[RMDB]
RNA sequence: GGGAACGACUCGAGUAGAGUCGAAAAGGACGAGGCUGAUGUGCUGGGCGAUCGUAUUGCUAUCAUGUGCGACGGUGAGCUUAAGUGCCAAGGAACCUCAUUUUUCCUGAAGAAGCAAUAUGGAUCACCUGCAUCAGGUAUUCGUACCUGAUGCAGGAAAAGAAACAACAACAACAAC
Reactivity to 2A3 in 0.01 (KOAc 150mM, MgCl2 10mM, bicine 150mM(pH8.5), 24C), signal-to-noise 1, nucleotides 027 to 126: g010g000a000c000g000a010g020g000c030u080g050a040u090g030u000g060c060u040g020g030g010c060g010a010u000c000g020u010a100u060u170g020c010u010a050u300c060a090u270g040u040g060c030g020a000c020g100g000u020g040a030g000c000u050u000a140a040g090u040g030c040c040a050a040g040g000a050a110c000c060u000c020a040u070u040u010u090u000c000c000u040g030a070a000g030a050a020g070c070a030a050u090a080u150g170g000a030u040c010a000
Reactivity to DMS in 0.01 (KOAc 150mM, MgCl2 10mM, bicine 150mM(pH8.5), 24C), signal-to-noise 2, nucleotides 027 to 126: g010g000a050c070g010a060g000g000c040u010g020a130u010g010u020g000c070u000g010g000g030c040g000a040u000c010g010u000a030u000u000g000c000u000a110u000c110a080u010g060u010g050c100g010a090c300g010g020u000g030a090g040c050u000u000a040a090g010u020g010c050c080a110a100g000g000a070a090c240c060u010c030a060u000u000u030u000u000c020c000u000g030a120a120g000a080a050g010c030a030a010u010a040u000g010g010a060u000c050a140